An RNA of 177 nucleotides, treated with DMS and 2A3 and read out base by base. Source: RMDB library OK2TST, as collected in RNAgym. The RNA was probed in 150 mM KOAc, 10 mM MgCl2 and 150 mM bicine (pH 8.5) at 24 C. DMS adducts were read by reverse transcription with MarathonRT.
RNA sequence: GGGAACGACUCGAGUAGAGUCGAAAACGGCUUUCAAGCGAAGGAUAAGCUGGUCACCUUCAAGGGCAAGACGUAUUACUUCGACGCACACACUGGUAAUGGUAUCAAAGAUACCUGGCGCAAUAUCCUACACCCUUCCAUUCGUGGAAGGGUGUAGAAAAGAAACAACAACAACAAC
Reactivity to DMS in 0.01 (KOAc 150mM, MgCl2 10mM, bicine 150mM(pH8.5), 24C), signal-to-noise 2, nucleotides 027 to 126: c030g020g000c000u000u010u000c110a100a130g000c190g010a070a050g020g000a050u000a020a080g000c040u000g020g020u010c090a130c050c010u000u020c100a080a190g000g000g000c070a040a020g010a050c050g000u010a070u000u000a090c050u020u000c020g010a120c100g000c030a050c100a060c130a070c060u000g000g000u020a070a040u000g000g000u010a060u010c040a060a100a130g000a050u000a000c010c010u000g000g000c030g000c130a060a040u010a050u010c050
Reactivity to 2A3 in 0.01 (KOAc 150mM, MgCl2 10mM, bicine 150mM(pH8.5), 24C), signal-to-noise 3, nucleotides 027 to 126: c000g020g000c010u070u140u080c070a080a030g080c000g060a040a010g020g000a050u040a090a050g000c040u060g080g010u050c030a110c030c000u060u050c090a110a110g080g000g000c030a030a020g030a030c040g050u040a060u090u090a090c020u000u070c040g040a040c060g020c000a040c000a000c000a030c060u060g070g000u100a080a070u120g030g000u020a030u060c080a190a210a000g030a020u010a020c000c010u010g010g000c040g010c040a040a080u040a060u200c000
Description: The 2A3 profile rests on 2,547 reads. For DMS, 1,834 sequencing reads were counted.